RNA sequence: GGGAACGACUCGAGUAGAGUCGAAAAAUUAAUGGAUUAUGUAAGAUUAAAAUGGUUGAUGAAGCCUUGAAUCUCUUCACAGAAAUGCAUUGCAAACCCAAUACAGUAUCUUACAACACUCUUAUUGCCUUUCCAUUAGGUUCGCCUAAUGGAAAGGAAAAGAAACAACAACAACAAC
Reactivity to DMS in 0.01 (KOAc 150mM, MgCl2 10mM, bicine 150mM(pH8.5), 24C), signal-to-noise 1, nucleotides 027 to 126: a100u020u000a110a050u020g000g020a070u000u000a140u010g010u000a050a020g000a050u000u010a040a050a010a080u010g010g010u010u000g020a050u000g020a130a240g010c000c050u000u010g000a020a030u000c040u000c040u010u000c190a100c130a040g020a020a030a030u010g010c000a010u000u000g020c090a020a170a100c220c040c000a030a010u000a050c010a040g000u000a020u000c020u000u000a020c030a090a090c260a080c270u010c000u000u000a060u000u000g000
Reactivity to 2A3 in 0.01 (KOAc 150mM, MgCl2 10mM, bicine 150mM(pH8.5), 24C), signal-to-noise 1, nucleotides 027 to 126: a000u100u050a000a060u060g010g010a020u060u100a030u120g000u000a000a060g010a030u040u170a020a000a140a140u100g030g010u020u020g010a080u090g030a040a000g000c020c000u000u000g060a060a100u000c000u010c010u140u040c110a020c000a070g010a030a090a000u050g030c000a010u030u050g000c000a030a060a090c010c000c000a000a010u110a050c010a020g090u030a000u080c070u060u050a050c020a110a050c080a050c050u050c010u050u140a080u100u300g070

Structure probing data (DMS and 2A3) for a 177-nucleotide construct. The RNA was probed in 150 mM KOAc, 10 mM MgCl2 and 150 mM bicine (pH 8.5) at 24 C.